An RNA of 177 nucleotides, treated with DMS and 2A3 and read out base by base. The DMS profile rests on 9,462 reads. The data come from the RNA Mapping Database (RMDB), library OK2TRN. DMS adducts were read by reverse transcription with MarathonRT. DMS (dimethyl sulfate) methylates the pairing face of unpaired adenines and cytosines. The RNA was probed in 150 mM KOAc, 10 mM MgCl2 and 150 mM bicine (pH 8.5) at 24 C. 2A3 adducts were read by reverse transcription with SuperScript II with manganese.

RNA sequence: GGGAACGACUCGAGUAGAGUCGAAAAUUGUGGGACGAUAACUCCAAUCCUUUGACUAAUAUUUUGGAACUCUUUCGUCUGCUGUCCAUUAGUCAACCUCGGACCAGCAUCUCAACUGGGUGCGCUCAAUUGAUAUGAGGUUCGCCUCAUAUCAAUUAAAAGAAACAACAACAACAAC
Reactivity to DMS in 0.01 (KOAc 150mM, MgCl2 10mM, bicine 150mM(pH8.5), 24C), signal-to-noise 7, nucleotides 027 to 126: u010u010g010u010g010g010g010a050c050g020a060u010a070a160c140u010c020c030a050a070u000c090c070u010u010u010g000a070c080u000a030a060u010a130u000u000u010u000g000g000a070a080c080u000c110u000u000u000c050g010u000c030u000g010c050u000g010u000c020c030a090u010u000a050g010u000c030a030a080c130c060u000c080g010g010a080c070c070a070g010c040a030u000c040u000c080a060a130c110u000g000g010g010u000g010c040g020c170u000c090
Reactivity to 2A3 in 0.01 (KOAc 150mM, MgCl2 10mM, bicine 150mM(pH8.5), 24C), signal-to-noise 6, nucleotides 027 to 126: u110u090g050u150g060g000g020a010c040g020a060u030a110a050c030u010c030c010a020a060u050c030c000u100u060u120g070a040c040u070a040a110u100a190u150u130u080u090g040g010a070a080c020u030c040u150u160u050c050g070u020c060u050g040c040u040g040u010c020c000a020u000u100a030g030u040c030a030a020c040c020u040c040g030g020a030c030c000a010g000c000a060u010c040u010c050a090a250c070u100g010g050g000u040g000c020g020c020u030c050